This 207-nucleotide RNA was probed chemically with 2A3 and DMS. The 2A3 profile rests on 6,565 reads. Reactivities are given for positions 27 through 156. High DMS reactivity at an A or C suggests that its Watson-Crick edge is free. For 2A3 the reverse transcriptase was SuperScript II with manganese. DMS adducts were read by reverse transcription with MarathonRT.
RNA sequence: GGGAACGACUCGAGUAGAGUCGAAAACGCUGGGAAUCAGUGGAGUUUCCCAUUGACAUGCUGUAUCCUGAAGCGCGCACGGGAUGCAGCAACAGCAAUGGGAAACUCGUAACAUCUGAUUCCUGUGCUGAAGCGCGCACGGCAACCGAAAGGUGCGGUAUCUUACGAAGUUCGCUUCGUAAGAUACAAAAGAAACAACAACAACAAC
Reactivity to 2A3 in 0.01 (KOAc 150mM, MgCl2 10mM, bicine 150mM(pH8.5), 24C), signal-to-noise 4, nucleotides 027 to 156: c040g000c010u020g000g000g000a000a000u000c000a000g020u070g160g000a000g010u010u000u000c000c000c020a010u010u080g070a160c140a100u160g010c000u000g010u020a000u000c000c010u030g050a190a070g040c040g000c000g000c060a030c030g010g010g000a000u000g000c000a010g020c000a000a000c020a010g090c000a000a000u000g000g000g000a000a000a000c000u000c000g000u040a010a010c020a070u090c010u000g000a000u010u000c000c000u000g040u060g000c030u110g030a070a030g000c020g000c010g000c020a000c010g080g000c030a140a140c030c010g060a130a030a020g030g000u030g030c020g010
Reactivity to DMS in 0.01 (KOAc 150mM, MgCl2 10mM, bicine 150mM(pH8.5), 24C), signal-to-noise 1, nucleotides 027 to 156: c120g020c020u000g010g030g000a060a040u010c000a030g020u000g000g010a080g020u000u000u000c000c000c000a030u000u000g000a110c080a300u000g050c000u000g060u010a000u000c020c000u020g020a070a090g000c020g020c020g040c010a300c000g030g020g000a000u000g000c000a040g000c000a000a050c090a150g030c030a070a060u000g020g010g000a000a000a030c000u000c010g030u010a080a170c040a090u000c000u010g000a060u000u000c010c000u000g030u000g030c000u000g020a110a050g020c030g030c000g010c010a140c000g020g020c000a060a130c020c010g020a080a050a220g020g010u000g070c060g000